This 177-nucleotide RNA was probed chemically with 2A3 and DMS. For 2A3 the reverse transcriptase was SuperScript II with manganese. Reactivities are given for positions 27 through 126. For 2A3, 1,438 sequencing reads were counted.
[RMDB]
RNA sequence: GGGAACGACUCGAGUAGAGUCGAAAAGAAACAGCUGGUUCCGACCGAAACAUGUCGAAGCAUGACCUCUGCCGAGGUAGUCUGUGGGGUAGAGCGACGGAUUGGGGGACCGCACUCCGAGAGGAGUUUAGGUUAUCCGGUUCGCCGGAUAACCUAAAAAAGAAACAACAACAACAAC
Reactivity to 2A3 in 0.01 (KOAc 150mM, MgCl2 10mM, bicine 150mM(pH8.5), 24C), signal-to-noise 3, nucleotides 027 to 126: g020a000a110a010c040a030g070c010u110g000g000u000u000c000c030g030a020c010c010g020a050a120a010c010a060u140g030u110c030g120a100a020g030c030a040u060g070a030c000c000u020c010u090g050c010c040g070a060g050g070u080a070g140u000c080u060g080u050g000g140g000g040u050a030g000a000g030c030g040a050c060g000g020a050u080u150g110g020g010g000g040a020c010c000g000c020a010c000u000c000c010g050a040g000a020g040g000a000g010u010
Reactivity to DMS in 0.01 (KOAc 150mM, MgCl2 10mM, bicine 150mM(pH8.5), 24C), signal-to-noise 2, nucleotides 027 to 126: g000a120a050a100c030a050g010c040u050g000g020u000u000c050c000g000a080c020c000g000a040a100a170c090a050u010g000u010c020g000a110a140g010c050a090u090g000a210c030c000u030c000u000g020c090c110g020a100g000g000u020a010g020u020c030u020g050u000g000g010g010g010u050a050g010a060g030c040g030a210c030g020g000a090u030u010g000g010g010g020g000a030c010c020g030c100a130c020u000c000c000g000a240g000a170g000g000a020g000u000